This 177-nucleotide RNA was probed chemically with DMS and 2A3.

RNA sequence: GGGAACGACUCGAGUAGAGUCGAAAAAUUUCAAUGCAGCAUACUUGCAUUGAGCUGCUAAGCACGAAGCAGUAAGUGGUUAUGUAUAUAGCGACUUUAGGAAUUGUUGCAGGCUGAGAACGAGCGACAUAAUAAAGUUGUUCGCAACUUUAUUAUGAAAAGAAACAACAACAACAAC
Reactivity to DMS in 0.01 (KOAc 150mM, MgCl2 10mM, bicine 150mM(pH8.5), 24C), signal-to-noise 9, nucleotides 027 to 126: a020u000u010u000c000a010a010u000g010c000a020g020c270a150u010a100c220u010u000g010c010a010u000u000g000a010g000c030u000g000c010u010a060a130g010c020a040c040g000a060a020g010c010a010g010u000a030a020g020u000g000g020u000u000a010u000g000u000a070u010a030u000a020g010c010g000a020c010u000u000u000a030g010g010a090a070u000u000g010u010u000g020c020a120g010g010c040u010g000a120g010a090a090c130g010a070g010c090g010a160
Reactivity to 2A3 in 0.01 (KOAc 150mM, MgCl2 10mM, bicine 150mM(pH8.5), 24C), signal-to-noise 7, nucleotides 027 to 126: a000u010u020u000c000a000a000u010g000c000a020g010c040a090u090a260c070u100u020g000c000a010u010u010g000a000g000c000u000g000c010u020a160a030g010c010a000c040g020a020a000g000c010a000g010u020a020a010g000u030g080g010u090u020a030u050g190u040a090u060a010u010a290g020c050g080a010c000u020u020u040a040g030g080a080a050u050u070g110u120u050g010c010a010g080g000c020u040g030a030g040a220a050c070g010a030g010c020g020a020
For 2A3, 12,989 sequencing reads were counted. Reactivities are given for positions 27 through 126. 2A3 adducts were read by reverse transcription with SuperScript II with manganese.